[RMDB]
RNA sequence: GGGAACGACUCGAGUAGAGUCGAAAACGUACCUGGGUUCUAAGACAUCGGAGACCACUUCAAUUCUUCAGCCUUGGGAAAAAGAAAGUAAGGUUCCUAUUGUAAGACGAGCUACUAGACUGAGAGAGCUGCCAUUGACGUUCGCGUCAAUGGCAGCAAAAGAAACAACAACAACAAC
Reactivity to 2A3 in 0.01 (KOAc 150mM, MgCl2 10mM, bicine 150mM(pH8.5), 24C), signal-to-noise 1, nucleotides 027 to 126: c070g160u180a080c000c000u060g000g000g000u150u000c020u120a000a000g060a000c000a100u020c070g060g000a030g200a070c000c170a060c060u010u010c000a000a100u020u020c000u030u210c070a070g120c000c000u170u150g250g000g070a040a000a000a000a010g070a130a000a000g080u130a060a000g000g000u000u000c000c000u130a130u210u250g100u000a030a040g010a000c170g000a000g030c000u080a070c010u000a070g090a170c000u070g000a070g000a000g020a000
Description
The record gives the reactivity of an RNA of 177 nucleotides to 2A3. The reactions ran in a buffer of 150 mM KOAc, 10 mM MgCl2 and 150 mM bicine (pH 8.5), at 24 C. Reactivities are given for positions 27 through 126. 2A3 adducts were read by reverse transcription with SuperScript II with manganese.